[RMDB]
RNA sequence: GGGAACGACUCGAGUAGAGUCGAAAACUUAACGCGUUCGCGCGUUAAGAAACAACAUAAACAUCGAGUUGACGAUGACACAAAUACCGUCAGUCUAGACGGAAAGCAUUCGCUUCGGCGAAUGCAAGCAUAUCCUCAAGUUCGCUUGAGGAUAUGCAAAAGAAACAACAACAACAAC
Reactivity to 2A3 in 0.01 (KOAc 150mM, MgCl2 10mM, bicine 150mM(pH8.5), 24C), signal-to-noise 5, nucleotides 027 to 126: c000u010u000a010a000c000g030c010g030u020u070c180g000c010g000c000g100u000u010a000a000g000a010a060a000c020a010a010c030a070u250a120a180a020c010a020u010c010g020a060g130u070u090g210a130c020g020a030u030g070a010c020a000c020a200a150a010u190a140c000c000g020u010c010a050g150u080c150u170a120g000a000c010g000g000a080a010a000g000c000a000u000u000c010g020c030u030u100c240g080g000c010g010a000a000u010g010c000a000a010
Reactivity to DMS in 0.01 (KOAc 150mM, MgCl2 10mM, bicine 150mM(pH8.5), 24C), signal-to-noise 4, nucleotides 027 to 126: c000u000u000a010a000c000g020c000g050u000u010c190g030c030g040c000g020u000u010a010a010g000a110a060a040c100a080a050c070a080u010a070a130a160c030a050u000c010g000a190g010u000u000g020a170c060g010a040u010g000a130c200a080c210a060a090a070u010a090c000c000g000u000c000a110g000u000c170u000a160g000a020c010g000g010a050a050a070g020c000a020u000u000c000g020c000u000u000c210g050g000c000g030a010a010u000g020c000a020a040
The record gives the reactivity of an RNA of 177 nucleotides to 2A3 and DMS. The DMS profile rests on 3,367 reads. The RNA was probed in 150 mM KOAc, 10 mM MgCl2 and 150 mM bicine (pH 8.5) at 24 C. Values cover nucleotides 27 to 126.